Background: An RNA of 207 nucleotides, treated with DMS and 2A3 and read out base by base. Reactivities are given for positions 27 through 156.
RNA sequence: GGGAACGACUCGAGUAGAGUCGAAAACCUACUCCUUCGGGAGUAGGAUGAAUCCUAAGUCAGCGAAGAACGAGUGAGAGGCUAUGAAGUGUCGGAAACGACAUGGAGCCUCCCUCGGGAGCUGAUAUGGAACAGCUAGAUGAUUUCGAUCAUCUAAUAUAUUCAGGCAGUUCGCUGCCUGAAUAUAAAAAGAAACAACAACAACAAC
Reactivity to DMS in 0.01 (KOAc 150mM, MgCl2 10mM, bicine 150mM(pH8.5), 24C), signal-to-noise 2, nucleotides 027 to 156: c030c000u000a000c010u000c000c030u010u000c300g060g000g030a050g060u000a010g040g030a000u000g010a070a150u000c050c010u000a070a270g010u000c000a030g050c040g010a130a180g000a160a190c020g010a040g040u010g000a140g030a010g070g000c000u000a210u010g010a230a300g010u000g030u000c000g040g000a170a140a130c000g010a010c000a000u000g000g000a010g030c000c000u010c000c030c020u000c010g000g000g010a140g000c020u000g000a000u000a100u010g000g000a080a120c050a150g030c120u000a030g010a030u010g030a020u000u000u000c290g000a060u000c010a000u000c020u000a020a140
Reactivity to 2A3 in 0.01 (KOAc 150mM, MgCl2 10mM, bicine 150mM(pH8.5), 24C), signal-to-noise 3, nucleotides 027 to 156: c000c000u000a010c000u010c010c010u020u160c260g040g010g010a000g010u010a000g010g000a010u020g110a030a090u000c000c010u020a170a000g010u000c010a010g030c130g120a300a040g030a060a090c020g000a010g010u220g090a300g000a010g060g000c010u020a300u300g020a060a010g000u000g000u000c000g000g070a010a070a080c000g000a000c000a000u020g000g020a000g000c010c000u000c000c000c010u010c010g000g020g000a000g000c000u000g000a010u000a040u090g040g010a060a060c020a060g040c140u120a020g000a010u000g000a000u040u140u260c250g020a030u000c000a000u000c000u000a050a010
Conditions: 150 mM KOAc, 10 mM MgCl2 and 150 mM bicine (pH 8.5), 24 C.
2A3 adducts were read by reverse transcription with SuperScript II with manganese.